This 177-nucleotide RNA was probed chemically with DMS and 2A3.
[RMDB]
RNA sequence: GGGAACGACUCGAGUAGAGUCGAAAAGCUGAGAGUAGCACUGUCCUUAAAAAGUGCGUUUGAAUCUCACUUCAAACAUUCAUAUUUAAGGGUGAAUGUGAAGAGUGAGCUCUUCACUACUCUCAGAGAUAGGAUUGAGAUUCGUUUCAGUUCUAUCAAAAGAAACAACAACAACAAC
Reactivity to DMS in 0.01 (KOAc 150mM, MgCl2 10mM, bicine 150mM(pH8.5), 24C), signal-to-noise 9, nucleotides 027 to 126: g010c010u000g010a020g000a010g010u000a040g010c020a020c010u010g000u020c090c100u020u060a060a090a070a070a030g010u000g010c070g010u030u040u020g000a030a000u050c010u000c010a010c010u010u000c030a090a300a010c000a000u000u000c000a000u000a070u020u030u060a120a140g020g000g020u000g000a010a010u000g000u000g000a200a270g000a010g010u000g000a010g000c000u000c010u000u000c010a060c300u000a050c000u000c000u000c000a000g000a070
Reactivity to 2A3 in 0.01 (KOAc 150mM, MgCl2 10mM, bicine 150mM(pH8.5), 24C), signal-to-noise 9, nucleotides 027 to 126: g050c000u000g000a000g000a000g010u120a010g010c010a000c050u080g070u180c050c000u090u090a090a100a050a030a010g030u040g030c050g110u030u050u060g030a020a090u300c010u010c040a010c010u070u060c010a030a030a010c000a000u020u030c010a010u070a110u160u250u210a150a060g300g030g000u010g010a020a020u030g010u010g030a100a040g000a000g010u020g020a010g000c000u000c000u000u000c000a000c000u000a000c000u000c000u000c000a000g000a000
The data come from the RNA Mapping Database (RMDB), library OK1LIB. The RNA was probed in 150 mM KOAc, 10 mM MgCl2 and 150 mM bicine (pH 8.5) at 24 C.